[RMDB]
RNA sequence: GGGAACGACUCGAGUAGAGUCGAAAAGCACUCCGGGCCGAAUGGUCGAGUAGCACUCAGAGGGAGGAAUCCACACGGAGUAGAGCAGAGAAAUCACCUCCAGAGGACCCCUUCAGCGAACAGAGAGCUAUACUAUUUACUUCGGUAAAUAGUAUAGAAAAGAAACAACAACAACAAC
Reactivity to DMS in 0.01 (KOAc 150mM, MgCl2 10mM, bicine 150mM(pH8.5), 24C), signal-to-noise 6, nucleotides 027 to 126: g020c030a050c010u010c010c090g060g020g000c000c010g000a120a080u010g040g020u000c010g000a030g010u000a100g020c020a140c030u000c030a120g010a100g020g010g010a050g000g000a070a130u000c010c000a050c170a300c110g010g010a020g010u010a110g010a160g020c140a140g000a080g010a100a100a080u000c030a120c170c000u000c010c000a060g000a260g000g000a050c020c040c000c010u000u000c040a070g000c090g000a060a030c070a060g000a210g000a090g000
Reactivity to 2A3 in 0.01 (KOAc 150mM, MgCl2 10mM, bicine 150mM(pH8.5), 24C), signal-to-noise 5, nucleotides 027 to 126: g010c000a010c020u010c030c040g070g030g000c020c010g220a260a240u300g010g000u020c010g000a000g000u040a030g010c020a010c020u040c030a020g000a010g030g040g010a180g050g000a070a090u000c010c010a050c000a000c130g010g010a010g020u090a050g040a040g050c130a020g030a020g040a150a130a020u050c020a040c010c000u000c000c010a010g020a040g020g010a020c020c000c010c000u020u030c030a040g050c030g060a040a010c030a020g070a020g000a000g070